The record gives the reactivity of an RNA of 207 nucleotides to DMS and 2A3.
Reactivities are given for positions 27 through 156.
The DMS profile rests on 1,961 reads.
RNA sequence: GGGAACGACUCGAGUAGAGUCGAAAAUGGUAUUUAUUAUCACCACUUAAAGUGAACCCAUAUGCCAGUGGCAUAUUGAGCUAACAAUCUGUGAUGUCAUUGGCAGAAGCAGCUCUUCCAGAAGGCAGAGUUGCUGAGGAUUCUCUAUGACAUUACAUACCUAGGUCCUAUUCGUAGGACCUAGGUAAAAAGAAACAACAACAACAAC
Reactivity to DMS in 0.01 (KOAc 150mM, MgCl2 10mM, bicine 150mM(pH8.5), 24C), signal-to-noise 1, nucleotides 027 to 156: u000g030g010u000a030u020u000u000a080u010u000a020u000c040a050c000c010a060c100u000u030a050a250a160g010u000g040a080a060c020c010c000a160u000a080u000g000c010c000a230g000u020g010g000c010a020u000a030u000u010g010a040g020c070u010a140a110c130a160a120u000c030u010g000u000g010a020u000g000u000c030a040u000u000g050g000c010a000g010a150a120g000c000a010g020c000u000c000u000u010c000c040a050g010a090a260g030g030c020a050g030a030g020u000u000g010c000u010g000a090g060g070a180u010u010c040u000c010u000a080u000g000a060c110a030u000u000a060c010a260
Reactivity to 2A3 in 0.01 (KOAc 150mM, MgCl2 10mM, bicine 150mM(pH8.5), 24C), signal-to-noise 3, nucleotides 027 to 156: u090g000g000u090a060u070u300u080a130u190u120a090u100c030a030c100c010a050c040u070u260a180a120a080g000u000g070a040a030c000c010c000a030u060a060u060g000c040c030a070g050u020g050g000c000a010u030a030u040u180g010a030g020c120u130a140a080c030a070a050u040c060u020g100u090g130a010u000g000u000c010a000u000u000g020g000c000a010g010a030a000g000c000a000g010c000u000c000u030u000c010c010a100g040a300a070g270g000c010a000g000a010g000u000u030g000c000u000g020a100g020g020a130u070u020c040u000c020u050a080u140g040a030c000a050u100u220a040c040a040